[RMDB]
RNA sequence: GGGAACGACUCGAGUAGAGUCGAAAAUUGGGCUUAAAAACAGGCUUUGACAGUCCCUCAAUCUUAGACGGGAUUCACGGACUAUGUCCGCCGUGAGGCCAGCCAUCCAAUGCGACAACGAGGGGAGAUAACAUCCCCAGUUCGCUGGGGAUGUUAUAAAAGAAACAACAACAACAAC
Reactivity to DMS in 0.01 (KOAc 150mM, MgCl2 10mM, bicine 150mM(pH8.5), 24C), signal-to-noise 3, nucleotides 027 to 126: u000u010g030g010g000c090u000u020a020a080a090a080a120c220a100g010g010c030u000u010u000g000a080c110a150g020u000c000c000c010u000c140a070a100u010c180u000u010a080g010a070c210g000g000g000a030u000u000c060a110c150g000g010a060c090u010a130u010g010u010c060c140g010c050c020g000u000g000a060g010g020c020c030a090g000c040c020a090u000c020c000a070a060u000g010c020g000a030c090a060a040c070g000a090g010g000g000g010a120g010
Reactivity to 2A3 in 0.01 (KOAc 150mM, MgCl2 10mM, bicine 150mM(pH8.5), 24C), signal-to-noise 1, nucleotides 027 to 126: u030u060g030g000g010c020u080u060a060a030a000a020a160c070a040g000g000c000u070u040u100g070a040c010a010g050u000c000c020c020u030c050a100a120u000c050u050u180a130g040a200c120g000g000g030a060u080u040c020a030c010g040g010a010c050u110a150u300g050u040c050c010g000c000c000g020u040g010a000g050g060c020c000a010g010c020c000a020u000c010c000a000a080u040g090c050g050a030c060a050a020c020g040a110g000g000g030g010a060g020